Source: RMDB library OK1LIB, as collected in RNAgym. This 177-nucleotide RNA was probed chemically with DMS. Conditions: 150 mM KOAc, 10 mM MgCl2 and 150 mM bicine (pH 8.5), 24 C. DMS adducts were read by reverse transcription with MarathonRT. Reactivities are rounded to 0.1 and cut off at 0 and 3.
RNA sequence: GGGAACGACUCGAGUAGAGUCGAAAAGGCCGUGGAGGUGCUGGGGGCGGAGGCGGGCUUGGCCACGCCCCCGCGGCGGGAAGUUGUGGACUGGGAAGGCGCCUGGGACGAAGACGACGGCGGCGCGCCAUCCGGCUUGAUUCGUCAAGCCGGAUGGAAAAGAAACAACAACAACAAC
Reactivity to DMS in 0.01 (KOAc 150mM, MgCl2 10mM, bicine 150mM(pH8.5), 24C), signal-to-noise 1, nucleotides 027 to 126: g000g000c040c000g040u000g000g000a120g020g000u040g020c030u000g010g000g000g050g030c010g010g000a000g090g030c050g010g050g040c180u020u000g010g010c030c010a130c000g060c000c000c000c020c010g000c000g000g000c030g050g000g000a060a100g010u000u010g000u000g000g000a070c090u000g000g030g020a120a150g040g030c010g030c050c000u020g020g010g010a100c180g000a050a050g000a050c050g000a050c030g000g000c030g000g020c000g010c010g000